[RMDB]
RNA sequence: GGGAACGACUCGAGUAGAGUCGAAAACCCUGGUUAUUCGUAACCAGGGGUUGAGUGAAUCCUCUCUGUGCAUCGGUGGAUCACACGAAACGCAUGGACGACAAUUACGGUUAUUCGUAACCGUAAACGAUCUGAAGAAUUUCGAUUCUUCAGAUCGAAAAGAAACAACAACAACAAC
Reactivity to DMS in 0.01 (KOAc 150mM, MgCl2 10mM, bicine 150mM(pH8.5), 24C), signal-to-noise 5, nucleotides 027 to 126: c000c000c000u000g010g000u000u000a010u000u010c140g020u000a000a000c000c000a010g010g000g000g020u010u010g000a110g010u000g010a150a140u010c020c010u010c090u000c020u000g020u000g000c040a070u000c050g000g030u000g010g020a130u010c170a090c020a050c000g000a030a070a080c140g020c010a010u010g000g000a050c150g010a050c130a080a140u000u000a000c000g000g000u010u000a040u000u020c160g020u000a010a020c000c000g010u000a010a020a140
Reactivity to 2A3 in 0.01 (KOAc 150mM, MgCl2 10mM, bicine 150mM(pH8.5), 24C), signal-to-noise 5, nucleotides 027 to 126: c000c000c000u010g000g010u010u020a040u050u080c220g020u030a000a000c000c000a000g030g010g000g000u050u190g060a080g010u130g070a070a090u030c000c010u010c010u000c020u030g010u020g020c020a060u030c070g150g010u070g040g140a190u200c050a030c010a010c130g030a050a080a020c100g000c010a010u020g000g010a020c080g010a030c070a060a070u050u010a010c000g000g030u000u000a010u040u090c170g020u020a000a010c000c000g000u000a000a010a010